[RMDB]
RNA sequence: GGGAACGACUCGAGUAGAGUCGAAAACAUUGGUGCCGUAAGGCACGGAAAUGGAUGAAUGAUUCAUCUUUUCCACGAGGUUGCGGCUGACCAGAUUGGCGGUGAAGACACCGGUUUCCUCGACAUACCCGUGCACCUGCUUCGGCAGGUGCACGGGAAAAGAAACAACAACAACAAC
Reactivity to 2A3 in 0.01 (KOAc 150mM, MgCl2 10mM, bicine 150mM(pH8.5), 24C), signal-to-noise 1, nucleotides 027 to 126: c070a010u000u170g000g000u020g000c000c010g000u000a020a230g170g010c000a000c000g000g000a070a040a000u300g050g010a000u000g000a010a070u140g080a130u300u080c000a000u000c000u000u000u000u000c000c010a000c120g040a010g200g040u040u000g000c040g000g000c000u020g060a070c010c000a000g010a210u000u130g020g000c000g010g050u060g040a180a140g090a110c000a000c000c030g050g000u000u060u000c000c010u010c040g050a000c010a070u160a000